[RMDB]
RNA sequence: GGGAACGACUCGAGUAGAGUCGAAAAGAACACGGAAGGUAAUAACGGUAACAAACCUCUCGGUCUAUGGAACGUCGUUUCCAUCGGCAUUGGGGCAAUGGUGGGGGCGGGGAUCUUCGCGCUGCUGUCAAUAUGCGGCAUUCGUGCCGCAUAUUGAAAAAGAAACAACAACAACAAC
Reactivity to 2A3 in 0.01 (KOAc 150mM, MgCl2 10mM, bicine 150mM(pH8.5), 24C), signal-to-noise 1, nucleotides 027 to 126: g000a010a000c060a000c000g040g050a010a050g000g000u100a020a110u100a110a050c090g050g140u090a100a090c040a150a140a040c070c020u060c000u010c060g030g000u000c020u030a000u000g000g030a090a020c080g290u090c060g000u200u020u000c000c010a000u030c010g000g000c060a060u040u110g000g000g000g000c090a080a300u070g000g030u120g070g000g020g020g000c170g040g000g010g000a030u110c050u040u030c020g030c010g000c150u090g030c000u070g070
Reactivity to DMS in 0.01 (KOAc 150mM, MgCl2 10mM, bicine 150mM(pH8.5), 24C), signal-to-noise 1, nucleotides 027 to 126: g030a060a080c070a200c050g020g010a040a090g040g000u010a060a140u000a140a060c150g000g000u020a010a120c190a080a090a080c020c000u010c030u020c080g010g000u000c020u020a010u000g000g000a040a000c030g010u000c280g000u010u000u000c000c000a020u020c060g000g000c020a080u000u030g000g010g000g010c090a070a050u010g010g000u000g000g020g010g030g000c170g020g010g000g050a080u000c080u000u000c050g020c020g050c050u000g030c070u010g000
The record gives the reactivity of an RNA of 177 nucleotides to 2A3 and DMS. The 2A3 profile rests on 836 reads.